[RMDB]
RNA sequence: GGGAACGACUCGAGUAGAGUCGAAAAGAAAGAAAGAAAGUUCAUUGUUUAUCGGAAACUUUAAACUGUAACCAUUCAAACUUUUCCAGAAGUUAGUUUGAAUAGAAAUUAAAAAGAAACUUCUGAAUAACCUUAUCAUGCUUCGGCAUGAUAAGAAGCUACAUCACAUGUUCGCAUGUGAUGUAGCAAAAGAAACAACAACAACAAC
Reactivity to 2A3 in 0.01 (KOAc 150mM, MgCl2 10mM, bicine 150mM(pH8.5), 24C), signal-to-noise 2, nucleotides 027 to 156: g050a010a010a000g050a010a070a010g040a050a060a040g010u050u030c060a100u080u220g080u100u160u190a160u240c100g050g050a070a050a010c000u000u020u120a080a130a010c020u070g060u050a030a040c010c010a010u000u000c000a000a000a000c010u040u000u000u010c060c010a000g000a010a000g000u030u010a000g000u000u020u000g000a010a000u000a140g010a010a040a020u110u170a080a100a010a000a000g000a010a010a000c000u000u000c000u010g010a020a000u040a020a000c000c000u000u000a000u000c000a000u000g000c010u010u060c080g060g000c000a010u000g000a000u000a000a010g000a000a000